Structure probing data (DMS) for a 177-nucleotide construct.
The data come from the RNA Mapping Database (RMDB), library TTRDEL.
Reactivities are given for positions 27 through 126.

RNA sequence: GGGAACGACUCGAGUAGAGUCGAAAAGAUAUGGAGCAUCUAGUUGGCGAUGAGUCGGAAACGACGAGCCGUCAGCUAGAGUGCUCCUAAGUCAAAACAGUGGCUUUCCUUCGGGAAAGCCACUGAAGUACACGUCCUUGUUCGCAAGGACGUGUACAAAAGAAACAACAACAACAAC
Reactivity to DMS in 0.01 (KOAc 150mM, MgCl2 10mM, bicine 150mM(pH8.5), 24C), signal-to-noise 1, nucleotides 027 to 126: g000a040u000a300u000g000g000a000g010c000a050u000c000u000a000g000u000u000g020g000c000g000a010u010g000a300g000u000c010g020g000a050a150a130c010g010a000c030g010a300g010c060c000g020u000c010a000g010c000u040a040g000a010g010u010g000c000u000c000c000u000a000a040g010u010c030a110a090a130a220c020a000g040u000g000g000c000u000u000u000c010c000u000u000c220g000g000g000a000a000a000g010c000c000a000c000u000g010a000a090